[RMDB]
RNA sequence: GGGAACGACUCGAGUAGAGUCGAAAAGAUAUGGACCGUUACACGGGAGCUGUGGUUCGGAAACGAACCGUCAGCAUCGAUCGUGACGACGGUCCUAAGUCAAAAGGUAACCGUUCGCGGUUACCAACCGUUAAUGGUGGUUCGCCACCAUUAACGGAAAAGAAACAACAACAACAAC
Reactivity to 2A3 in 0.01 (KOAc 150mM, MgCl2 10mM, bicine 150mM(pH8.5), 24C), signal-to-noise 2, nucleotides 027 to 126: g010a000u050a030u100g020g000a000c000c000g020u010u050a020c020a010c000g090g130g060a070g030c000u010g000u040g020g010u020u000c000g020g000a060a010a030c010g000a000a010c000c000g050u110c000a000g010c030a080u180c050g050a140u060c010g000u040g140a300c230g000a000c010g030g000u000c000c010u000a010a000g030u010c020a000a030a000a120g000g000u020a000a030c020c010g000u050u070c300g000c010g160g000u030u000a000c000c000a000a000
Reactivity to DMS in 0.01 (KOAc 150mM, MgCl2 10mM, bicine 150mM(pH8.5), 24C), signal-to-noise 2, nucleotides 027 to 126: g000a040u010a300u010g000g000a020c000c000g020u000u000a300c000a000c000g020g010g010a060g040c000u000g020u010g000g000u010u000c010g010g010a080a090a150c000g000a000a000c000c000g000u010c000a000g010c010a300u020c280g000a060u020c000g040u000g000a090c100g020a020c010g020g000u000c000c010u010a000a120g010u020c040a080a070a130a110g000g020u000a010a000c010c000g030u000u010c290g050c030g020g010u000u000a000c000c010a030a030
An RNA of 177 nucleotides, treated with 2A3 and DMS and read out base by base.
The RNA was probed in 150 mM KOAc, 10 mM MgCl2 and 150 mM bicine (pH 8.5) at 24 C.
The DMS profile rests on 2,238 reads.
DMS adducts were read by reverse transcription with MarathonRT.
The data come from the RNA Mapping Database (RMDB), library TTRDES.
For 2A3, 5,645 sequencing reads were counted.